Chemical mapping of a 177-nucleotide RNA with 2A3 and DMS. For DMS the reverse transcriptase was MarathonRT. The RNA was probed in 150 mM KOAc, 10 mM MgCl2 and 150 mM bicine (pH 8.5) at 24 C. Source: RMDB library TTRDEL, as collected in RNAgym.
RNA sequence: GGGAACGACUCGAGUAGAGUCGAAAAGAUAUGGAAUGUGUAGGGAGCUGGUCGGAAACGAUUCAGCUUUGAUCUACCAUUCCUAAGUCAAAAGUGUAUUCAUAAGCUUCGGCUUAUGAAUACACAACACAUAGCUGCAGUUCGCUGCAGCUAUGUGAAAAGAAACAACAACAACAAC
Reactivity to 2A3 in 0.01 (KOAc 150mM, MgCl2 10mM, bicine 150mM(pH8.5), 24C), signal-to-noise 2, nucleotides 027 to 126: g020a040u060a040u130g000g000a010a010u010g240u030g010u080a010g030g000g020a020g030c010u020g000g020u010c010g020g000a050a010a030c010g010a000u300u300c030a000g000c000u050u040u030g010a010u000c000u000a000c000c000a000u010u000c000c000u000a080a020g070u020c040a010a020a180a100g000u000g000u000a010u000u000c010a020u000a000a010g000c000u020u160c300g030g000c010u030u020a000u000g000a000a000u000a000c000a000c010a000a000
Reactivity to DMS in 0.01 (KOAc 150mM, MgCl2 10mM, bicine 150mM(pH8.5), 24C), signal-to-noise 3, nucleotides 027 to 126: g000a040u010a300u010g000g010a010a000u000g020u020g010u000a020g000g000g000a000g030c000u000g000g020u000c010g000g000a080a080a200c010g000a010u000u010c000a000g030c000u000u000u020g000a040u000c010u000a010c000c010a020u000u010c000c000u000a030a070g000u010c020a100a070a110a140g000u000g000u000a010u000u010c000a010u000a000a010g010c000u000u020c210g020g020c010u000u000a000u000g010a010a010u000a000c010a000c010a060a100